[RMDB]
Conditions: 150 mM KOAc, 10 mM MgCl2 and 150 mM bicine (pH 8.5), 24 C. Structure probing data (2A3) for a 177-nucleotide construct.

RNA sequence: GGGAACGACUCGAGUAGAGUCGAAAAUCGCCAGCUCUCCAUGAUAUCAGCUUCGGAGCCAGAUCAAAAAGGAGGAAUACCGCAGGCCUGCGGUGCGGCAGUGUGGAGACCUGCCGUAAGCCGUGUUCCUGGGUUAGGUGUUCGCACCUAACCCAGGAAAAGAAACAACAACAACAAC
Reactivity to 2A3 in 0.01 (KOAc 150mM, MgCl2 10mM, bicine 150mM(pH8.5), 24C), signal-to-noise 1, nucleotides 027 to 126: u050c010g060c020c010a010g040c000u000c000u000c040c000a090u030g080a030u090a060u090c040a020g000c020u070u110c030g020g000a030g020c000c000a000g000a060u030c070a000a100a070a130a000g000g020a030g000g100a120a070u150a070c000c040g020c020a030g000g040c090c040u000g030c000g000g000u000g020c000g000g000c000a000g020u010g070u140g290g000a090g040a080c020c000u000g000c000c000g010u030a070a000g000c000c020g030u010g020u010u000